Structure probing data (2A3 and DMS) for a 177-nucleotide construct. For 2A3, 917 sequencing reads were counted. For DMS the reverse transcriptase was MarathonRT. The reactions ran in a buffer of 150 mM KOAc, 10 mM MgCl2 and 150 mM bicine (pH 8.5), at 24 C. 2A3 adducts were read by reverse transcription with SuperScript II with manganese. The DMS profile rests on 1,591 reads. High 2A3 reactivity points to a flexible backbone, as in loops and unpaired stretches.
RNA sequence: GGGAACGACUCGAGUAGAGUCGAAAAAUCAGAAACCCACGUUGGCUGGACGCAGUAAACAUCCACGCCAUGGUGACUUUCGAGGGAAUCGGUGAAGUGCCGUUCACCGCCAAUCCGCAAGACGUGGUGAGCUAAAUGGGUUCGCCCAUUUAGCUCAAAAAGAAACAACAACAACAAC
Reactivity to 2A3 in 0.01 (KOAc 150mM, MgCl2 10mM, bicine 150mM(pH8.5), 24C), signal-to-noise 1, nucleotides 027 to 126: a010u130c060a050g130a060a040a040c010c030c010a000c010g030u000u080g010g000c020u000g000g010a010c000g000c060a140g080u300a040a120a030c010a040u060c010c000a010c230g050c010c000a010u050g110g000u070g020a080c050u110u160u060c080g090a090g000g070g040a070a130u140c000g000g070u020g000a050a050g140u160g230c110c080g070u040u000c010a020c030c020g040c000c000a000a050u050c010c020g020c060a050a010g040a000c020g020u010g010g030
Reactivity to DMS in 0.01 (KOAc 150mM, MgCl2 10mM, bicine 150mM(pH8.5), 24C), signal-to-noise 3, nucleotides 027 to 126: a080u030c050a200g000a110a110a130c120c020c000a030c020g010u020u000g010g000c020u000g010g000a010c020g000c090a150g040u010a120a060a180c060a090u000c000c000a000c230g000c010c000a030u010g000g000u010g000a180c080u000u000u000c120g000a140g040g000g000a180a100u000c030g000g020u000g000a030a060g020u000g020c210c120g020u010u000c010a010c020c000g010c130c030a060a120u000c040c030g040c150a050a080g020a050c040g020u000g000g030